Overview:
The record gives the reactivity of an RNA of 177 nucleotides to 2A3 and DMS. The RNA was probed in 150 mM KOAc, 10 mM MgCl2 and 150 mM bicine (pH 8.5) at 24 C. Values cover nucleotides 27 to 126. It was measured as part of the RMDB library RFMREP.

[RMDB]
RNA sequence: GGGAACGACUCGAGUAGAGUCGAAAAAACUAGACCGAAGCUGCCAAGGUGCGUGAUCCCUCGGUGAUGCCUUGAGUGUUGCUUCGCCAAAAAACAACCACACGGCCUAGCCGAAUUUCUCAUUAAACACUGUUCUAAACUUCGGUUUAGAACAGUGAAAAGAAACAACAACAACAAC
Reactivity to 2A3 in 0.01 (KOAc 150mM, MgCl2 10mM, bicine 150mM(pH8.5), 24C), signal-to-noise 2, nucleotides 027 to 126: a010a000c090u070a080g030a040c050c010g000a030a000g020c030u050g000c010c000a060a000g040g000u060g040c120g120u040g030a050u050c040c050c040u020c060g020g070u050g030a050u110g000c000c000u040u060g050a100g180u080g160u220u070g000c020u020u000c010g040c010c020a070a120a000a010a000a030c030a020a010c030c010a030c000a010c050g010g010c000c040u100a020g000c000c010g010a010a000u010u080u010c010u020c000a050u120u160a110a060a030
Reactivity to DMS in 0.01 (KOAc 150mM, MgCl2 10mM, bicine 150mM(pH8.5), 24C), signal-to-noise 2, nucleotides 027 to 126: a100a060c020u000a060g010a020c130c000g040a100a060g060c020u010g000c030c010a020a030g000g020u000g060c210g000u000g000a070u000c020c020c030u000c140g020g020u030g010a050u000g000c010c020u010u000g000a110g010u000g010u000u010g000c040u020u000c030g010c090c110a000a020a080a020a020a020c080a090a040c050c050a080c110a170c020g020g000c000c070u020a070g010c020c010g000a080a090u000u000u000c010u000c060a180u000u000a090a060a180